[RMDB]
RNA sequence: GGGAACGACUCGAGUAGAGUCGAAAACGUGCUGAGCAGUAUUGCGGUGUACACGCCCGGCAGUAAACUAGUCGAGCCUAUCGCGACGCCAUGGGGAGUGCUCGCGUGGAGCACCACGCCACAACUAACAUAGACCAACAUUCGUGUUGGUCUAUGUAAAAGAAACAACAACAACAAC
Reactivity to DMS in 0.01 (KOAc 150mM, MgCl2 10mM, bicine 150mM(pH8.5), 24C), signal-to-noise 6, nucleotides 027 to 126: c100g010u000g020c030u010g010a120g020c020a080g030u000a060u010u010g010c040g000g010u000g020u010a080c130a080c170g000c010c030c030g020g000c030a060g000u010a060a090a130c150u000a060g010u000c040g010a080g010c030c060u000a070u010c050g000c020g000a070c090g010c030c040a060u010g010g010g010g000a140g010u000g010c060u000c050g010c100g020u000g010g000a100g000c100a050c010c030a040c050g010c020c040a040c080a040a070c110u010a110
Reactivity to 2A3 in 0.01 (KOAc 150mM, MgCl2 10mM, bicine 150mM(pH8.5), 24C), signal-to-noise 5, nucleotides 027 to 126: c040g030u040g040c050u070g040a050g060c030a030g070u120a100u150u190g030c020g060g040u070g010u040a060c090a010c090g000c000c000c000g020g000c020a030g040u210a060a120a100c070u090a050g090u030c010g010a010g000c000c020u100a070u110c030g010c040g070a040c030g020c050c020a100u150g000g000g040g000a110g010u050g010c030u030c030g030c040g060u080g030g020a050g040c030a060c060c000a020c030g050c010c020a090c020a110a060c030u080a040
About this RNA:
Conditions: 150 mM KOAc, 10 mM MgCl2 and 150 mM bicine (pH 8.5), 24 C. Structure probing data (DMS and 2A3) for a 177-nucleotide construct. For 2A3 the reverse transcriptase was SuperScript II with manganese. 2A3 is a SHAPE reagent: it acylates the 2'-hydroxyl of flexible nucleotides of all four kinds. For DMS the reverse transcriptase was MarathonRT. The 2A3 profile rests on 7,632 reads. Values are in units of 0.01, from 0 to 300, in steps of 10.